[RMDB]
RNA sequence: GGGAACGACUCGAGUAGAGUCGAAAAAUCAACGUUCGCGUUGAUGGGAAUGGGGUCUGCUUUGAUCGAUGAACAGGCAUCGAUCCUGAAGCCUCCACGGGGGAGCCUGAAUCGGGAGCAGACGGAGGCACCCAAAGCUAACGCCUUCGGGCGUUAACCCUCUACGAGAUUUCGAUCUCGUAGAGGGAAAAGAAACAACAACAACAAC
Reactivity to 2A3 in 0.01 (KOAc 150mM, MgCl2 10mM, bicine 150mM(pH8.5), 24C), signal-to-noise 2, nucleotides 027 to 156: a000u010c000a000a020c000g020u040u040c240g000c010g130u010u010g010a010u000g040g000g010a250a190u280g030g020g110g000u030c020u010g040c040u060u130u240g110a180u260c010g000a030u090g090a220a080c020a030g060g020c010a210u050c030g090a170u030c000c030u050g030a050a010g000c000c010u020c000c000a010c030g000g010g000g010g010a010g000c000c040u030g130a130a130u100c060g000g000g070a020g000c000a000g020a020c010g010g000a000g010g000c000a030c010c000c000a080a020a000g000c050u060a010a000c000g000c000c020u050u120c240g070g000g000c000g000u010u000a000a000
Source information:
The record gives the reactivity of an RNA of 207 nucleotides to 2A3. The reactions ran in a buffer of 150 mM KOAc, 10 mM MgCl2 and 150 mM bicine (pH 8.5), at 24 C. For 2A3 the reverse transcriptase was SuperScript II with manganese.